[RMDB]
RNA sequence: GGGAACGACUCGAGUAGAGUCGAAAAAAUGUUCGCAUCCAUAACAUUUUGAAAGACGGUGGAUAUGUGAUUCGUUUAAUGAAACAUAUUCACGAGUGCCAUAUGAUUCACUUGUUUGACGAUUAUAGUGAGUCCUUUUAUUCGUAAAAGGACUCACAAAAGAAACAACAACAACAAC
Reactivity to DMS in 0.01 (KOAc 150mM, MgCl2 10mM, bicine 150mM(pH8.5), 24C), signal-to-noise 1, nucleotides 027 to 126: a030a060u000g000u000u000c130g040c150a090u020c100c090a080u000a040a010c020a020u000u000u000u000g000a070a050a070g000a050c030g010g000u000g000g000a010u000a030u000g020u000g010a160u000u000c060g000u010u000u030a040a060u000g030a040a060a050c000a000u020a000u000u000c020a020c000g010a080g030u000g020c000c020a100u010a090u000g010a150u000u010c010a040c110u000u000g020u000u000u000g000a070c140g030a070u000u000a080u000a070
Reactivity to 2A3 in 0.01 (KOAc 150mM, MgCl2 10mM, bicine 150mM(pH8.5), 24C), signal-to-noise 1, nucleotides 027 to 126: a000a050u070g020u020u010c120g000c070a100u000c010c000a020u120a040a000c000a050u000u000u040u240g100a060a000a000g070a000c030g010g080u020g000g000a000u000a030u040g040u020g160a290u040u040c050g070u110u270u200a190a180u140g020a030a000a000c000a000u050a000u080u030c010a010c070g000a010g020u100g070c040c000a060u080a020u220g170a140u060u160c060a010c000u000u160g090u070u090u040g040a070c060g050a120u240u070a050u210a180
The data come from the RNA Mapping Database (RMDB), library OK2TST.
This 177-nucleotide RNA was probed chemically with DMS and 2A3.
The 2A3 profile rests on 528 reads.
Conditions: 150 mM KOAc, 10 mM MgCl2 and 150 mM bicine (pH 8.5), 24 C.
For 2A3 the reverse transcriptase was SuperScript II with manganese.